[RMDB]
RNA sequence: GGGAACGACUCGAGUAGAGUCGAAAAGAUAUGGAUAGCGACAUGAAGUUUAUCGGAAACGAUAGUCAGCUUCAACAGCGCUGAUCCUAAGUCAAAACAUGAAUCCGACUUCGGUCGGAUUCAUGAACUAGGCCUAAAUGUUCGCAUUUAGGCCUAGAAAAGAAACAACAACAACAAC
Reactivity to 2A3 in 0.01 (KOAc 150mM, MgCl2 10mM, bicine 150mM(pH8.5), 24C), signal-to-noise 3, nucleotides 027 to 126: g010a030u070a040u150g010g000a010u020a000g000c000g200a220c070a100u120g000a020a000g010u120u120u070a010u000c010g000g060a130a040a010c020g020a010u020a010g150u220c150a010g030c010u020u030c010a100a110c090a090g060c020g020c000u110g110a030u000c000c000u030a140a030g060u040c020a020a000a130a170c000a000u000g000a000a000u000c000c000g010a010c020u070u070c300g050g000u000c000g000g000a010u000u010c010a000u000g010a000a000
Reactivity to DMS in 0.01 (KOAc 150mM, MgCl2 10mM, bicine 150mM(pH8.5), 24C), signal-to-noise 4, nucleotides 027 to 126: g000a070u000a300u010g010g010a010u000a040g000c010g020a040c080a270u010g000a010a000g010u010u010u000a000u000c010g000g010a110a120a170c010g020a010u000a010g010u000c300a060g000c000u000u000c020a010a060c300a170g010c020g030c000u000g000a010u000c000c000u010a040a160g010u000c020a070a070a120a190c010a000u000g000a010a000u000c000c000g000a010c000u000u010c190g040g000u000c000g000g000a000u000u000c000a000u000g000a050a140
Overview
This 177-nucleotide RNA was probed chemically with 2A3 and DMS. Source: RMDB library TTRDEL, as collected in RNAgym. For DMS, 2,950 sequencing reads were counted. Conditions: 150 mM KOAc, 10 mM MgCl2 and 150 mM bicine (pH 8.5), 24 C. For 2A3 the reverse transcriptase was SuperScript II with manganese.